Conditions: 150 mM KOAc, 10 mM MgCl2 and 150 mM bicine (pH 8.5), 24 C. This 207-nucleotide RNA was probed chemically with DMS and 2A3.

RNA sequence: GGGAACGACUCGAGUAGAGUCGAAAACUGGAGAUCGUUACUAGCCCUGUCUUCCUGAAUUCGCCUUGUCAGGUGAAGAAGAGGUAAAUGCCACGUUCAGCACACAACCGUAUACAUGGCCAGUAAUUUGCGGCAGCGUCAACUGAGAAAGGCGGCAUGACGAUUAUGUAUUCGUACAUAAUCGUCAAAAAGAAACAACAACAACAAC
Reactivity to DMS in 0.01 (KOAc 150mM, MgCl2 10mM, bicine 150mM(pH8.5), 24C), signal-to-noise 2, nucleotides 027 to 156: c050u020g000g000a060g020a050u000c050g030u000u000a070c050u010a140g010c010c000c040u010g030u000c000u000u000c020c000u000g010a090a190u000u000c040g010c010c010u000u020g030u000c090a050g030g030u020g020a050a040g030a070a120g020a060g000g030u000a060a110a070u000g010c000c000a120c070g020u000u000c060a160g000c070a040c020a070c030a070a060c020c020g000u000a090u010a070c080a030u000g020g000c020c070a100g020u000a040a090u010u010u000g030c020g000g000c000a090g000c060g000u000c070a040a060c060u010g010a080g000a050a070a070g010g020c010g000g030c090a170
Reactivity to 2A3 in 0.01 (KOAc 150mM, MgCl2 10mM, bicine 150mM(pH8.5), 24C), signal-to-noise 4, nucleotides 027 to 156: c030u040g050g000a050g030a140u080c050g040u030u050a050c050u060a100g030c070c000c000u050g120u030c020u030u070c030c000u000g040a050a060u060u060c030g020c020c000u060u050g090u100c050a020g010g060u100g070a020a000g010a020a010g060a080g000g020u060a090a120a110u110g010c000c000a010c030g030u030u050c040a020g000c050a010c000a000c010a060a040c010c020g020u050a020u030a060c080a080u060g040g000c020c010a000g030u050a020a130u060u080u160g030c030g020g000c030a030g000c010g060u060c020a050a040c040u050g010a010g060a150a020a000g030g030c010g010g000c060a060
It was measured as part of the RMDB library OK3TST. Reactivities are given for positions 27 through 156. DMS adducts were read by reverse transcription with MarathonRT.